RNA sequence: GGGAACGACUCGAGUAGAGUCGAAAAGAAUCCCUUGUAAAUGUGUGUCAACAACGCACGUUGAAUACGUCCCUGCCCUUUGUACACACCGCCCGUCGCUCCUACCGAUUGGAUGACUCGGUGAAAUCACCGGAUGCUUACGAGCAGAAAGUGAUUACUUAUCAGUCACGUUCGCGUGACUGAUAAGAAAAGAAACAACAACAACAAC
Reactivity to 2A3 in 0.01 (KOAc 150mM, MgCl2 10mM, bicine 150mM(pH8.5), 24C), signal-to-noise 4, nucleotides 027 to 156: g100a020a060u070c000c000c000u000u110g110u070a050a050a040u030g010u000g010u030g010u050c080a090a030c050a040a020c150g020c010a000c000g010u020u030g060a070a080u090a070c050g080u080c040c020c010u020g060c000c000c000u020u090u110g100u130a010c040a010c010a030c060c010g040c020c050c000g050u010c010g020c040u050c010c000u020a060c040c030g090a090u040u180g090g030a080u100g060a040c020u000c030g010g010u010g030a060a030a000u000c010a000c000c010g050g050a000u010g000c000u040u060a090c240g070a050g020c000a000g020a000a010a000g010u000g000a000u010u030a020
Reactivity to DMS in 0.01 (KOAc 150mM, MgCl2 10mM, bicine 150mM(pH8.5), 24C), signal-to-noise 2, nucleotides 027 to 156: g000a130a120u000c020c020c010u000u000g000u000a040a090a030u000g040u000g000u000g000u020c000a200a130c020a230a090c010g030c000a010c000g020u000u000g010a160a110u010a100c050g030u000c010c050c020u010g020c020c020c030u000u000u000g020u000a080c040a040c040a090c030c000g000c030c020c030g020u010c020g020c030u000c010c000u000a150c060c040g010a120u000u000g000g000a130u010g010a130c090u010c000g000g010u000g000a070a040a070u010c020a020c020c000g000g010a300u000g000c010u000u000a140c200g040a070g080c000a040g020a250a120a030g000u000g000a010u000u000a230